[RMDB]
RNA sequence: GGGAACGACUCGAGUAGAGUCGAAAAAAGUUUUUAAAAAGAGAACUGUCAGAUUUUAAAAGGAGAACUGAUGAGUUUUACUUUUGAGAAACUGCUCUGGGUGGGGAAAGAUCUGAAGGACUAAUUCGCAUAUAUAAUGUUUCGACAUUAUAUAUGCAAAAGAAACAACAACAACAAC
Reactivity to DMS in 0.01 (KOAc 150mM, MgCl2 10mM, bicine 150mM(pH8.5), 24C), signal-to-noise 2, nucleotides 027 to 126: a100a020g030u040u000u000u000u040a080a040a020a010a040g010a210g000a000a020c000u010g020u000c000a010g010a200u000u000u000u000a050a070a120a190g010g010a100g020a030a050c000u000g000a020u010g010a010g020u000u010u040u000a070c000u000u000u000u000g010a150g010a020a010a020c010u000g010c160u000c060u000g010g000g000u000g000g010g000g010a050a020a050g010a060u020c080u000g010a080a090g010g000a090c150u000a060a110u000u000c160